The record gives the reactivity of an RNA of 177 nucleotides to DMS and 2A3. Source: RMDB library M2PK50, as collected in RNAgym. For DMS the reverse transcriptase was MarathonRT.
[RMDB]
RNA sequence: GGGAACGACUCGAGUAGAGUCGAAAAGCUUGUAGCUUCGGCUACAAGCAUCUUAAAUCAGCGGUAAAUAAUUACGAGGCGUUACCGCUGAACGCCUCGAUACAACCACAUCAUUCGUGAUGUGGAACUAUUACGUCAUCUUCGGAUGACGUAAUAGAAAAGAAACAACAACAACAAC
Reactivity to DMS in 0.01 (KOAc 150mM, MgCl2 10mM, bicine 150mM(pH8.5), 24C), signal-to-noise 3, nucleotides 027 to 126: g000c000u000u000g010u000a000g010c000u000u020c250g030g000c000u000a000c000a000a010g000c000a000u000c020u000u000a040a090a140u000c010a010g010c010g010g000u010a040a040a030u000a020a040u000u010a110c050g010a020g000g010c000g000u000u010a120c030c010g000c000u000g000a010a020c010g000c000c000u010c010g020a210u010a060c230a070a140c000c000a000c000a000u000c000a050u000u010c210g020u010g010a000u000g010u000g000g000a010a090
Reactivity to 2A3 in 0.01 (KOAc 150mM, MgCl2 10mM, bicine 150mM(pH8.5), 24C), signal-to-noise 5, nucleotides 027 to 126: g000c000u000u000g010u000a000g000c010u040u040c250g120g000c000u000a000c010a000a000g000c000a010u020c000u030u170a100a120a060u040c000a010g010c020g200g220u190a120a080a030u100a090a100u170u150a120c070g000a000g000g020c010g000u010u020a160c010c000g000c000u000g000a000a000c000g000c000c000u010c010g000a000u040a170c090a060a050c020c000a000c000a000u000c000a010u040u160c200g130u060g010a000u000g000u010g000g000a010a000